[RMDB]
Overview
The record gives the reactivity of an RNA of 177 nucleotides to DMS and 2A3.
RNA sequence: GGGAACGACUCGAGUAGAGUCGAAAAGAUAUGGAAACUACCUUCUUGGAUUUAUGAACUAUAUCGGAAACGAUAUAGAAUUGUCAGAAGAUGUUUCCUAAGUCAAACUGUCAGUUCGCUGACAGAACACCUAUGCAUCGUUCGCGAUGCAUAGGUGAAAAGAAACAACAACAACAAC
Reactivity to DMS in 0.01 (KOAc 150mM, MgCl2 10mM, bicine 150mM(pH8.5), 24C), signal-to-noise 2, nucleotides 027 to 126: g000a040u000a300u010g000g020a040a010a000c000u000a070c080c000u000u000c020u000u010g000g010a060u000u000u000a100u000g000a110a160c010u000a010u000a000u000c000g020g000a120a090a130c010g000a010u000a000u010a030g010a050a020u000u000g000u000c040a020g000a010a000g010a010u000g000u000u000u000c000c000u010a070a120g020u020c020a120a080a220c010u000g010u000c000a020g030u000u000c220g010c010u020g000a010c010a010g010a140a140
Reactivity to 2A3 in 0.01 (KOAc 150mM, MgCl2 10mM, bicine 150mM(pH8.5), 24C), signal-to-noise 3, nucleotides 027 to 126: g010a020u050a040u090g030g020a000a000a030c000u050a100c020c000u000u050c060u150u250g290g010a250u280u300u240a190u300g030a050a030c010u010a000u000a010u010c000g000g020a050a040a000c010g000a000u000a000u010a000g040a010a080u090u060g070u090c090a040g000a000a000g000a010u010g000u000u000u020c000c010u000a070a000g030u000c030a050a050a120c000u000g000u020c000a010g000u030u130c240g000c160u010g000a000c000a010g010a020a000
Source: RMDB library TTRDEL, as collected in RNAgym. For 2A3, 3,461 sequencing reads were counted. The RNA was probed in 150 mM KOAc, 10 mM MgCl2 and 150 mM bicine (pH 8.5) at 24 C.